[RMDB]
RNA sequence: GGGAACGACUCGAGUAGAGUCGAAAAGAAACGAGGGUUGGCUAAGCCUGGUCGGACAUCAGGAGGUUAGUGCACUCGCAUAAGCCAGCUUGACAACAAAAAGGAAAAAGAAAGAAGAAAAAGAAAACAGUCGGUCAUUAUUCGUAAUGACCGACUGAAAAGAAACAACAACAACAAC
Reactivity to 2A3 in 0.01 (KOAc 150mM, MgCl2 10mM, bicine 150mM(pH8.5), 24C), signal-to-noise 2, nucleotides 027 to 126: g020a010a010a000c070g000a010g050g220g070u050u050g000g000c010u080a050a000g000c000c000u000g010g020u090c130g000g150a020c030a070u120c030a000g020g030a010g050g130u050u150a070g030u020g030c010a010c110u080c090g000c020a050u050a090a020g040c050c040a000g010c010u050u050g040a020c080a050a020c000a000a080a000a000a130g100g000a010a070a070a090a040g140a050a010a010g140a000a050g110a080a100a000a050a000g130a000a090a000a000
Reactivity to DMS in 0.01 (KOAc 150mM, MgCl2 10mM, bicine 150mM(pH8.5), 24C), signal-to-noise 1, nucleotides 027 to 126: g010a150a000a070c200g010a050g000g000g060u000u010g050g000c000u000a070a150g020c000c000u020g050g000u040c080g000g000a180c090a100u000c010a000g000g020a000g000g000u000u000a070g030u000g000c070a170c060u000c220g030c090a060u000a130a040g000c000c000a160g020c000u000u000g000a230c260a060a140c090a010a060a000a120a000g000g000a000a060a000a090a000g050a130a090a030g000a040a230g000a020a100a170a050a020g000a000a060a090a020
Notes: This 177-nucleotide RNA was probed chemically with 2A3 and DMS. DMS (dimethyl sulfate) methylates the pairing face of unpaired adenines and cytosines. The reactions ran in a buffer of 150 mM KOAc, 10 mM MgCl2 and 150 mM bicine (pH 8.5), at 24 C. Reactivities are given for positions 27 through 126. It was measured as part of the RMDB library OK1LIB. High 2A3 reactivity points to a flexible backbone, as in loops and unpaired stretches.